Chemical mapping of a 177-nucleotide RNA with 2A3 and DMS. It was measured as part of the RMDB library OK1LIB. Reactivities are rounded to 0.1 and cut off at 0 and 3. For 2A3 the reverse transcriptase was SuperScript II with manganese.
RNA sequence: GGGAACGACUCGAGUAGAGUCGAAAAAUAUAGAUGAAUGUUACUUUGCAUUUUACGUUUUGAAUAUUACAAGUAAAAUGUUAACAUGAAGACUACAUCAAAACUAUGCAGAAAUCAUUCUUACCUCGACCGGUGAUUUAUUCGUAAAUCACCGGUCAAAAGAAACAACAACAACAAC
Reactivity to 2A3 in 0.01 (KOAc 150mM, MgCl2 10mM, bicine 150mM(pH8.5), 24C), signal-to-noise 3, nucleotides 027 to 126: a000u160a030u120a050g230a060u140g030a070a000u050g000u040u030a050c000u080u030u000g000c000a010u000u020u060u210a060c030g030u000u000u020u060g010a030a020u170a080u290u080a110c030a070a000g030u070a040a080a070a080u080g000u080u200a120a030c000a070u110g070a100a010g060a070c030u030a030c030a030u030c010a010a030a030a010c000u010a010u050g020c000a000g070a020a000a000u050c000a020u010u010c010u010u020a100c030c020u080c070
Reactivity to DMS in 0.01 (KOAc 150mM, MgCl2 10mM, bicine 150mM(pH8.5), 24C), signal-to-noise 1, nucleotides 027 to 126: a000u010a210u090a050g000a010u000g010a020a030u000g000u000u000a170c260u000u000u000g000c000a010u000u000u030u030a080c300g100u000u000u000u000g000a040a060u010a140u000u000a070c110a000a170g010u000a000a030a300a030u000g060u000u040a040a100c110a040u030g000a250a080g120a030c110u000a130c140a120u000c000a000a060a000a000c150u000a060u000g000c030a080g000a030a060a030u000c040a010u000u000c000u000u020a030c010c010u000c190